Conditions: 150 mM KOAc, 10 mM MgCl2 and 150 mM bicine (pH 8.5), 24 C. The record gives the reactivity of an RNA of 177 nucleotides to 2A3 and DMS. For 2A3 the reverse transcriptase was SuperScript II with manganese. The 2A3 profile rests on 3,525 reads. For DMS, 2,172 sequencing reads were counted. It was measured as part of the RMDB library OK1LIB. Reactivities are given for positions 27 through 126.
[RMDB]
RNA sequence: GGGAACGACUCGAGUAGAGUCGAAAAUGCUCUUGCAUGUUCAGUCUACUGAUUACGCUGUAGAGGCAGUCGCAGAAGGGCUUGAGCGUCUGGCUUCUAUAUGCGAUGAGACGCUGCAAAGCUUCGAGGAUGGUCAUAUCUUCGGAUAUGACCAUCCAAAAGAAACAACAACAACAAC
Reactivity to 2A3 in 0.01 (KOAc 150mM, MgCl2 10mM, bicine 150mM(pH8.5), 24C), signal-to-noise 5, nucleotides 027 to 126: u140g010c020u060c040u050u020g020c030a040u240g040u120u180c020a050g000u020c030u090a300c040u170g110a200u230u070a070c010g000c020u000g010u040a010g000a020g020g020c000a000g010u040c010g000c010a030g050a300a100g100g080g010c000u080u120g060a040g020c000g000u000c030u020g180g120c000u020u030c000u010a060u060a060u290g010c000g020a020u040g040a000g000a000c010g000c010u000g000c000a000a030a020g000c000u060u100c080g080a090
Reactivity to DMS in 0.01 (KOAc 150mM, MgCl2 10mM, bicine 150mM(pH8.5), 24C), signal-to-noise 1, nucleotides 027 to 126: u020g000c040u010c120u000u020g000c000a000u000g000u010u080c050a230g020u000c000u000a110c000u000g030a220u010u010a140c020g010c010u000g010u000a030g000a060g020g020c000a010g000u000c000g000c000a040g050a110a130g030g000g000c050u000u010g010a250g000c000g000u010c040u030g010g000c010u000u000c000u000a010u000a020u080g030c000g010a040u000g000a000g070a010c030g000c000u000g030c000a000a010a070g010c000u000u030c110g030a180